The record gives the reactivity of an RNA of 177 nucleotides to DMS and 2A3.
2A3 is a SHAPE reagent: it acylates the 2'-hydroxyl of flexible nucleotides of all four kinds.
The data come from the RNA Mapping Database (RMDB), library M2PK50.

RNA sequence: GGGAACGACUCGAGUAGAGUCGAAAACCCACGACUUUCGAGUCGUGGGAAAUAUAAUCAGCGGUAAAUAAUUAGCUCCGCUUACCGCUGAAGCCGAGCAUACACGUCUAGGAUUCGUCCUAGACAACAAAUUAUUUGGAUUCGUCCAAAUAAUUUGAAAAGAAACAACAACAACAAC
Reactivity to DMS in 0.01 (KOAc 150mM, MgCl2 10mM, bicine 150mM(pH8.5), 24C), signal-to-noise 5, nucleotides 027 to 126: c000c010c010a030c010g020a020c000u000u000u010c150g010a030g030u000c000g030u000g000g000g000a000a020a040u000a080u010a140a120u000c010a000g020c000g000g000u000a010a040a100u010a100a090u010u000a100g010c040u000c060c080g000c090u000u000a010c010c000g000c000u000g010a010a070g000c030c040g000a100g020c160a100u000a100c200a070c170g000u000c000u000a010g000g000a040u000u010c200g000u000c000c000u000a010g000a000c000a040a100
Reactivity to 2A3 in 0.01 (KOAc 150mM, MgCl2 10mM, bicine 150mM(pH8.5), 24C), signal-to-noise 5, nucleotides 027 to 126: c000c000c000a010c000g000a010c000u060u110u200c220g100a000g000u000c000g000u000g010g000g000a000a100a000u190a010u030a030a210u030c010a000g000c000g040g040u020a020a030a090u130a060a190u230u170a050g050c040u020c070c010g010c000u010u010a020c000c000g000c010u010g000a000a000g030c030c030g070a040g040c030a080u160a140c090a030c200g000u000c000u000a000g000g000a020u030u050c170g030u010c030c000u000a000g030a000c010a000a000